Overview: Structure probing data (DMS and 2A3) for a 177-nucleotide construct. The reactions ran in a buffer of 150 mM KOAc, 10 mM MgCl2 and 150 mM bicine (pH 8.5), at 24 C. For DMS, 83,317 sequencing reads were counted. For 2A3 the reverse transcriptase was SuperScript II with manganese.
[RMDB]
RNA sequence: GGGAACGACUCGAGUAGAGUCGAAAAAUCAUACUGGAUAGUAGAAUUAGGUGUCACGGUCUCUGCUAUCUAGUAUGAGCAACACAGGUAGACUAGACUGUGAUACCUAAUGUCUAUCUGUGGUAAAGUAUCACGAUGUAUUCGUACAUUGUGAUACAAAAGAAACAACAACAACAAC
Reactivity to DMS in 0.01 (KOAc 150mM, MgCl2 10mM, bicine 150mM(pH8.5), 24C), signal-to-noise 9, nucleotides 027 to 126: a090u020c050a070u010a030c040u000g000g000a010u000a000g010u020a050g010a070a030u000u000a010g000g010u000g010u020c080a080c020g000g000u000c010u000c080u010g010c000u000a000u000c000u000a050g000u000a030u010g000a110g010c220a130a050c060a010c020a020g000g010u000a000g000a070c030u010a040g000a010c000u000g010u000g010a080u010a040c010c010u000a000a010u000g000u000c000u000a000u000c000u000g010u010g000g000u020a040a080a100
Reactivity to 2A3 in 0.01 (KOAc 150mM, MgCl2 10mM, bicine 150mM(pH8.5), 24C), signal-to-noise 9, nucleotides 027 to 126: a000u050c010a010u010a030c010u030g020g010a000u000a000g030u010a070g120a190a020u030u010a010g030g000u100g060u120c050a010c010g010g000u010c020u010c050u120g010c000u000a000u000c000u000a000g000u000a010u020g000a000g040c030a050a050c010a000c000a010g000g000u000a000g010a030c000u000a000g000a000c000u000g010u010g060a050u040a010c000c000u000a010a000u010g010u000c000u000a010u000c000u010g040u020g010g030u050a040a040a020